[RMDB]
Chemical mapping of a 177-nucleotide RNA with 2A3 and DMS. High 2A3 reactivity points to a flexible backbone, as in loops and unpaired stretches. For DMS the reverse transcriptase was MarathonRT. Conditions: 150 mM KOAc, 10 mM MgCl2 and 150 mM bicine (pH 8.5), 24 C. For 2A3 the reverse transcriptase was SuperScript II with manganese.
RNA sequence: GGGAACGACUCGAGUAGAGUCGAAAAGAACUGAAAGGAGUUCACCAUGUAAAUUGCCUGUUCGGACAUGUAGCCCAGCCAGCGUUAGAAAGAGAAAUCGAUCUGGCGGAGCCUGGUGAGGGCGAACAUGCCCUAAAUGCUUCGGCAUUUAGGGCAUAAAAGAAACAACAACAACAAC
Reactivity to 2A3 in 0.01 (KOAc 150mM, MgCl2 10mM, bicine 150mM(pH8.5), 24C), signal-to-noise 1, nucleotides 027 to 126: g030a000a000c050u060g140a120a110a030g100g160a000g000u000u080c000a030c030c050a010u100g040u300a050a200a140u080u070g020c000c030u090g050u170u180c030g030g060a080c000a010u000g080u020a000g000c000c000c000a010g000c000c000a000g000c000g000u000u000a000g010a000a000a000g000a000g040a000a090a080u030c020g000a000u000c000u040g000g000c010g000g000a020g200c000c000u000g000g050u000g030a300g030g000g000c000g000a000a000c030
Reactivity to DMS in 0.01 (KOAc 150mM, MgCl2 10mM, bicine 150mM(pH8.5), 24C), signal-to-noise 2, nucleotides 027 to 126: g000a020a030c020u020g000a070a060a190g030g010a030g000u000u000c000a230c030c010a150u020g030u010a020a050a060u000u000g000c000c020u000g000u010u000c040g000g010a070c110a020u000g000u030a300g040c000c010c010a300g000c000c000a030g020c010g000u000u000a020g000a010a010a300g000a000g000a060a080a180u000c000g000a200u000c010u000g000g030c000g010g050a070g010c300c060u000g000g000u000g000a080g010g000g010c000g000a090a020c190